An RNA of 170 nucleotides, treated with 2A3 and DMS and read out base by base. For DMS, 12,284 sequencing reads were counted. Conditions: 150 mM KOAc, 10 mM MgCl2 and 150 mM bicine (pH 8.5), 24 C. For 2A3, 18,688 sequencing reads were counted. DMS adducts were read by reverse transcription with MarathonRT. Source: RMDB library 15KLIB, as collected in RNAgym.
RNA sequence: GGGAACGACUCGAGUAGAGUCGAAAAACGUUGAUAUGGAUUUACUCCGAGGAGACGAACUACCACGAACAGGGGAAGCUCUACCCGUGGCGUCUCCGUUUGACGAGUAAGUCCUUAGUCAACAUGCACGCGCUACACUUCGGUGUAGCGAAAAGAAACAACAACAACAAC
Reactivity to 2A3 in 0.01 (KOAc 150mM, MgCl2 10mM, bicine 150mM(pH8.5), 24C), signal-to-noise 5, nucleotides 027 to 129: a000c110g000u000u000g000a010u000a030u060g000g000a000u000u010u010a000c000u000c010c010g030a060g010g000a010g010a000c010g010a070a030c100u170a050c080c010a020c000g040a130a020c040a160g000g000g000g050a060a060g040c010u000c000u050a090c020c020c010g000u020g010g010c010g000u010c000u000c000c000g010u060u040u080g000a010c010g000a000g000u000a010a000g000u000c000c000u000u000a010g010u000c000a000a000c000a020u080g050c050a060c080g100
Reactivity to DMS in 0.01 (KOAc 150mM, MgCl2 10mM, bicine 150mM(pH8.5), 24C), signal-to-noise 4, nucleotides 027 to 129: a080c060g040u040u010g010a000u030a050u000g000g030a060u020u010u020a030c030u030c000c050g050a070g000g000a000g010a000c030g020a090a120c150u150a300c010c040a100c000g030a070a300c160a000g040g010g000g040a070a030g080c060u050c040u050a130c140c090c030g030u020g000g000c110g000u040c010u010c000c000g010u050u050u030g030a180c300g030a000g010u010a000a000g000u030c010c010u010u060a030g030u000c010a030a010c000a090u070g020c020a030c150g020